[RMDB]
RNA sequence: GGGAACGACUCGAGUAGAGUCGAAAAUUAACUCGCCCAGGGUUUCCAAUUCGCCAAACUGGGCAGCAUCGUUGGCGUCGGCCACCGACCCAGGUCUUAGACCAUCACCCAGGGAGAAAGACACAUCAAUAUACUUGGCGUUCGCGCCAAGUAUAUUAAAAGAAACAACAACAACAAC
Reactivity to DMS in 0.01 (KOAc 150mM, MgCl2 10mM, bicine 150mM(pH8.5), 24C), signal-to-noise 1, nucleotides 027 to 126: u000u010a070a110c060u000c130g020c010c000c000a050g020g020g000u010u000u010c050c020a100a190u000u000c060g020c030c050a050a050a270c000u000g010g000g010c070a070g000c160a040u000c000g020u010u000g010g010c040g000u010c200g000g000c050c010a010c050c000g010a020c080c020c050a150g010g030u000c030u000u000a100g000a040c010c010a140u000c110a070c070c020c030a110g010g000g020a100g060a070a100a050g000a110c130a040c180a150u010c130
Conditions: 150 mM KOAc, 10 mM MgCl2 and 150 mM bicine (pH 8.5), 24 C. This 177-nucleotide RNA was probed chemically with DMS.